[RMDB]
RNA sequence: GGGAACGACUCGAGUAGAGUCGAAAAGCCGGGCUGUGGGAGGUCGCCGACGACGGCUGGCAGUUCCUCUCCUGGGCCGAAUACCAGCGCACCAAGGAACAGGUCAUUGCAGCGAAAGAGAAGGCAGCGGAACGCAAAGCGAAGUUCCUCGAAAACCCUACCCUUCCUAAUUCGUUAGGAAGGGUAGAAAAGAAACAACAACAACAAC
Reactivity to 2A3 in 0.01 (KOAc 150mM, MgCl2 10mM, bicine 150mM(pH8.5), 24C), signal-to-noise 4, nucleotides 027 to 156: g070c020c000g010g030g030c050u060g010u130g040g010g010a030g040g010u030c030g000c040c020g020a110c090g040a040c050g050g040c020u070g050g000c030a050g050u060u070c000c000u030c060u030c000c010u050g010g040g020c020c000g020a020a050u150a150c030c020a040g020c040g010c070a090c070c030a040a070g000g000a030a050c030a070g030g030u050c040a080u020u180g000c040a040g010c040g070a070a060a050g080a000g030a070a020g040g000c020a000g010c050g020g020a080a000c020g000c070a110a040a040g040c040g030a040a000g020u040u000c020c000u020c010g060a090a120a050a060c040c010
Reactivity to DMS in 0.01 (KOAc 150mM, MgCl2 10mM, bicine 150mM(pH8.5), 24C), signal-to-noise 2, nucleotides 027 to 156: g000c010c000g000g040g040c000u010g020u010g010g030g010a090g030g010u000c020g020c010c000g020a180c050g030a100c100g020g050c040u000g030g020c110a100g000u000u000c000c010u000c000u000c030c010u000g030g010g110c050c020g050a110a130u000a060c040c060a110g060c060g000c080a080c300c100a020a160g050g000a050a060c070a120g000g000u010c020a120u000u010g000c030a070g030c100g000a080a040a120g010a110g000a060a070g000g010c050a080g040c080g050g010a050a060c070g000c090a060a060a110g040c090g000a190a260g010u010u000c000c000u000c030g020a100a030a070a120c160c090